RNA sequence: GGGAACGACUCGAGUAGAGUCGAAAAGCCAUGCGAAUCCCAGGUUUCUCGUGUGUGGUGCCCGGGAUCCUGCCGGCGAAUAAAAGCAUGGACAAUUUUUGGUGUGGCUGGAUCGCUUGCAUCGAGUCCAGUCCACUGCAUUCGUGCAGUGGACUGGAAAAGAAACAACAACAACAAC
Reactivity to 2A3 in 0.01 (KOAc 150mM, MgCl2 10mM, bicine 150mM(pH8.5), 24C), signal-to-noise 2, nucleotides 027 to 126: g020c000c000a000u030g060c010g110a090a200u050c000c020c000a000g130g120u100u110u010c000u010c050g010u000g050u050g140u150g070g140u040g060c020c060c000g000g000g000a000u040c010c000u040g060c000c010g060g060c060g110a140a000u260a150a060a000a000g040c010a000u050g000g000a020c080a100a160u170u270u160u190u110g160g000u040g040u080g010g000c000u020g050g010a050u100c020g020c000u020u180g020c090a220u000c080g000a020g040u080